Structure probing data (DMS and 2A3) for a 207-nucleotide construct. Conditions: 150 mM KOAc, 10 mM MgCl2 and 150 mM bicine (pH 8.5), 24 C. For DMS, 6,914 sequencing reads were counted.
[RMDB]
RNA sequence: GGGAACGACUCGAGUAGAGUCGAAAACCCGCCAUUCGUGGCGGGAAAAAAGCGUACUACGAUUGAUCGAAGAACUUAUCUACCCACCCUUUCCCAAAUAGGAAAGGAGGAUAAGGGAGAUCUGUCGUAUCGCAAAAAAGCCUUGUUCGCAAGGCAAAGACUGUAGAUAGUUCGCUAUCUACAGUCUAAAAGAAACAACAACAACAAC
Reactivity to DMS in 0.01 (KOAc 150mM, MgCl2 10mM, bicine 150mM(pH8.5), 24C), signal-to-noise 2, nucleotides 027 to 156: c000c000c000g020c000c000a070u000u010c200g050u010g040g050c000g000g000g030a000a010a030a090a030a080g010c020g040u000a060c160u010a020c000g020a020u000u000g010a020u000c030g010a160a230g010a140a190c010u010u000a010u000c010u000a060c010c010c020a300c140c000c000u000u000u000c000c000c000a070a110a160u000a060g000g010a000a010a020g020g010a090g010g000a020u000a020a000g000g000g010a200g020a020u000c000u020g010u000c000g000u000a020u000c010g000c010a000a050a040a050a050a130g010c000c000u000u000g020u000u020c220g010c020a030a000g020g070c010a010a020
Reactivity to 2A3 in 0.01 (KOAc 150mM, MgCl2 10mM, bicine 150mM(pH8.5), 24C), signal-to-noise 7, nucleotides 027 to 156: c000c000c000g000c000c010a090u110u100c240g130u080g020g000c010g030g000g020a080a030a010a040a010a010g050c060g010u090a090c060u000a000c020g010a020u010u040g000a000u020c020g160a300a030g020a100a070c000u010u010a000u010c020u050a130c060c060c050a060c010c020c010u010u010u030c020c020c030a210a300a190u210a080g000g000a000a010a000g010g000a010g000g000a000u010a000a010g020g000g000a060g000a010u000c010u010g010u000c000g000u000a020u200c060g000c000a020a090a030a000a070a040g010c010c000u010u010g030u060u120c220g000c140a000a000g000g000c000a020a040